Chemical mapping of a 207-nucleotide RNA with 2A3 and DMS. For 2A3 the reverse transcriptase was SuperScript II with manganese. The DMS profile rests on 4,695 reads. The data come from the RNA Mapping Database (RMDB), library RSTRND. For 2A3, 4,004 sequencing reads were counted.
RNA sequence: GGGAACGACUCGAGUAGAGUCGAAAACGGUUGGAGCGCCGUCUCCAGCAACAUCACUGGUUCAGAGGAUGUUCGCCCCGGCGAGCAGAUUCUGAGGCGAGUUCCAGUUAAGGGACCGUCGCAACGCGUGGCAAGUGAUGGGCCCCUUUGGCUAGGGCUACUAACCCUAGUUCGCUAGGGUUAGUAGAAAAGAAACAACAACAACAAC
Reactivity to 2A3 in 0.01 (KOAc 150mM, MgCl2 10mM, bicine 150mM(pH8.5), 24C), signal-to-noise 4, nucleotides 027 to 156: c050g050g000u010u010g020g010a010g030c090g070c040c030g240u060c000u000c000c010a010g000c000a000a020c000a010u050c010a010c020u060g150g000u080u030c010a000g000a000g030g000a030u000g010u000u000c000g000c030c010c010c090g130g000c000g000a010g010c010a000g000a020u030u010c000u010g010a010g000g010c000g030a110g020u000u020c020c000a080g080u190u240a200a280g000g000g010a000c000c000g020u030c000g000c020a090a190c110g070c060g210u160g120g000c060a040a030g000u010g000a010u000g000g040g020c010c010c000c000u080u080u150g040g000c020u040a080g050g020g000
Reactivity to DMS in 0.01 (KOAc 150mM, MgCl2 10mM, bicine 150mM(pH8.5), 24C), signal-to-noise 2, nucleotides 027 to 156: c060g050g050u000u000g000g010a040g020c040g010c070c040g020u020c000u000c010c010a060g010c020a120a070c030a030u000c000a030c010u000g010g060u000u000c030a070g000a110g010g010a300u000g010u000u000c040g000c020c010c140c230g060g000c020g020a060g010c020a030g000a300u010u000c020u000g000a070g010g000c020g000a140g010u000u000c000c000a250g000u000u010a150a150g000g030g010a020c000c000g000u000c000g010c030a030a040c090g020c120g010u000g000g000c030a100a070g000u000g010a040u010g000g040g060c010c000c010c100u000u000u000g010g000c040u020a100g010g010g010